RNA sequence: GGGAACGACUCGAGUAGAGUCGAAAAUUUGCUCUGCCACUGGGGGAGUGACGAUGAAGGAGAGCUAGACAUUGUAGAAGACCCAAUUGACAGGCUAGCUAGAAUAGACAAUAGUUUUUGGCGUAUGCAGUCUGAGUGGAUUCGUCCACUCAGACUGAAAAGAAACAACAACAACAAC
Reactivity to DMS in 0.01 (KOAc 150mM, MgCl2 10mM, bicine 150mM(pH8.5), 24C), signal-to-noise 2, nucleotides 027 to 126: u000u010u010g000c030u010c030u000g010c010c020a040c100u000g000g000g010g000g010a200g050u000g020a050c100g000a070u010g000a140a100g020g000a080g000a040g020c050u000a040g000a140c040a080u010u000g010u000a120g010a080a090g010a160c020c000c020a080a080u000u000g000a110c070a070g010g000c010u000a040g000c020u000a030g000a040a120u000a120g000a090c130a050a090u000a090g020u000u000u000u000u000g000g020c040g030u000a120u000g020
Reactivity to 2A3 in 0.01 (KOAc 150mM, MgCl2 10mM, bicine 150mM(pH8.5), 24C), signal-to-noise 1, nucleotides 027 to 126: u000u000u050g040c000u010c060u040g160c010c020a120c170u100g000g000g030g040g050a050g000u040g020a000c030g030a080u070g090a030a070g030g010a110g020a030g050c030u000a020g000a100c040a090u080u150g020u060a030g010a150a000g090a090c000c020c000a030a030u050u010g060a000c060a020g090g010c020u010a030g000c000u060a020g040a090a180u060a020g080a050c020a090a110u040a070g050u000u020u020u070u140g060g000c060g000u000a110u210g070
Conditions: 150 mM KOAc, 10 mM MgCl2 and 150 mM bicine (pH 8.5), 24 C.
Chemical mapping of a 177-nucleotide RNA with DMS and 2A3.
DMS adducts were read by reverse transcription with MarathonRT.
2A3 adducts were read by reverse transcription with SuperScript II with manganese.